RNA sequence: GGGAACGACUCGAGUAGAGUCGAAAAUGUUGCUUGCCUGAGAUGAUCCGCGAGGUACUGCGCCAAAAGGCCCGGUCGAUCGAGGAGGCAUCGACAGCCAGCAUCGCAUACCUGGACGCGAUACUCUACCAUGGGACCUCUUUCGGAUGCCGCGCACCACCAUGGGGAACUUCGGUUCCCCAUGGUGAAAAGAAACAACAACAACAAC
Reactivity to 2A3 in 0.01 (KOAc 150mM, MgCl2 10mM, bicine 150mM(pH8.5), 24C), signal-to-noise 1, nucleotides 027 to 156: u080g010u040u010g000c050u000u020g000c000c030u130g170a100g030a110u050g000a000u020c000c000g020c010g000a000g000g020u130a030c040u000g010c010g000c050c000a050a230a090a130g030g020c050c210c030g050g010u010c010g070a160u000c010g000a040g050g010a020g060g250c030a000u000c000g040a040c010a000g010c000c010a000g000c010a010u040c050g000c020a060u070a250c000c020u040g020g040a040c010g000c010g030a010u030a150c010u000c020u030a100c000c060a090u110g010g030g000a030c000c000u000c000u050u110u030c010g000g030a050u030g080c060c010g000c020g000c020a010c040